[RMDB]
RNA sequence: GGGAACGACUCGAGUAGAGUCGAAAAGAUAUGGAGAUGAUGACCGGGAGGCUAUGCUGUCGGAAACGACAGCAAUACAAGCCGACGAUCGCAAGUCUCCUAAGUCAAAGAAGCCUUCGGGCUUCAACUUUCACGGAAUGUUCGCAUUCCGUGAAAGAAAAGAAACAACAACAACAAC
Reactivity to DMS in 0.01 (KOAc 150mM, MgCl2 10mM, bicine 150mM(pH8.5), 24C), signal-to-noise 1, nucleotides 027 to 126: g000a080u000a300u000g000g000a020g000a030u000g000a230u010g000a010c060c000g010g000g010a280g010g020c000u010a040u010g010c000u000g000u000c000g010g000a190a050a110c000g000a010c000a000g000c010a000a000u000a170c110a080a060g000c000c000g000a280c000g010a000u010c000g020c160a050a300g000u010c000u000c000c000u000a010a070g000u020c040a090a040a150g000a000a000g010c000c010u000u000c270g050g010g000c000u000u000c010a060a190